The data come from the RNA Mapping Database (RMDB), library OK2TST. The record gives the reactivity of an RNA of 177 nucleotides to 2A3 and DMS. For 2A3 the reverse transcriptase was SuperScript II with manganese. For DMS, 1,099 sequencing reads were counted.

RNA sequence: GGGAACGACUCGAGUAGAGUCGAAAACUCGUCUACCAGCAUGGCGAUGUGGUUGCGAUCAUGUUGCAUUUCGUGCAACAGCGCAUCGAGGUUUUUAGAGUCGGGAACAAAAGUUGCCGGUCGCAUACACACAUGUGAGCUUCGGCUCACAUGUGUGAAAAGAAACAACAACAACAAC
Reactivity to 2A3 in 0.01 (KOAc 150mM, MgCl2 10mM, bicine 150mM(pH8.5), 24C), signal-to-noise 1, nucleotides 027 to 126: c010u020c030g120u010c070u080a100c040c060a070g000c040a160u150g020g110c030g120a070u150g060u050g050g110u030u110g020c030g020a060u060c030a100u130g030u030u000g000c030a040u110u210u300c280g030u040g000c010a000a000c010a010g080c070g040c010a000u000c020g010a090g130g000u050u100u080u090u300a040g020a040g020u040c030g000g000g000a030a000c030a010a190a050a070g100u070u040g120c060c000g010g030u020c050g000c020a040u100a100
Reactivity to DMS in 0.01 (KOAc 150mM, MgCl2 10mM, bicine 150mM(pH8.5), 24C), signal-to-noise 1, nucleotides 027 to 126: c050u000c030g000u030c080u000a300c030c040a080g020c050a070u000g010g010c090g000a120u000g010u020g010g000u010u000g020c020g020a080u000c040a180u010g000u000u000g000c000a000u000u000u000c300g000u000g010c000a000a000c000a030g000c020g000c050a030u020c020g010a180g000g000u020u000u000u000u030a140g010a010g010u000c000g010g000g000a210a090c060a020a080a010a200g000u000u000g000c030c050g020g010u010c020g030c080a080u000a260